This 207-nucleotide RNA was probed chemically with DMS and 2A3. 2A3 adducts were read by reverse transcription with SuperScript II with manganese. DMS adducts were read by reverse transcription with MarathonRT.
RNA sequence: GGGAACGACUCGAGUAGAGUCGAAAACGCACUCGCAGCUUAAUAUCCUGCGCUGAGCCCUUCUCCCCCAGCUUGCCUGUGUCCUAGGGAAUUGGAAGGUCAUCCUUCACAGGAUCGUGUGGAAGUCAUUACUCGUGAGUGUUCGCACUCACGAGAAGGAUUUGUAUGAGUUCGCUCAUACAAAUCCAAAAGAAACAACAACAACAAC
Reactivity to DMS in 0.01 (KOAc 150mM, MgCl2 10mM, bicine 150mM(pH8.5), 24C), signal-to-noise 2, nucleotides 027 to 156: c070g030c020a090c070u030c000g010c050a040g000c060u010u000a090a110u000a120u000c130c000u000g000c000g030c070u010g020a100g010c050c000c020u000u000c060u000c010c000c020c040c000a090g000c040u000u000g030c030c030u000g030u000g010u020c060c020u000a110g000g040g010a100a110u000u010g000g030a080a070g010g020u000c100a130u000c030c040u000u010c050a140c050a080g020g010a050u020c070g010u020g000u010g000g000a110a300g000u010c080a090u020u000a190c010u000c020g050u000g000a070g020u010g010u040u000c300g040c000a030c010u010c000a000c010g000a020g020a040a090
Reactivity to 2A3 in 0.01 (KOAc 150mM, MgCl2 10mM, bicine 150mM(pH8.5), 24C), signal-to-noise 2, nucleotides 027 to 156: c040g000c040a080c020u020c020g010c000a000g000c020u050u090a070a010u050a060u120c010c000u020g030c000g040c180u050g000a050g040c020c000c000u180u110c090u070c030c000c000c000c000a010g030c050u030u090g010c000c010u050g010u000g000u050c020c000u030a030g080g000g040a040a040u050u030g050g020a050a000g040g010u060c040a050u140c020c000u040u030c010a030c000a030g000g060a070u060c030g000u040g000u020g080g050a050a050g040u050c030a100u100u120a100c000u000c010g000u000g000a010g000u000g000u040u030c100g000c050a000c000u000c000a000c010g000a000g010a000a010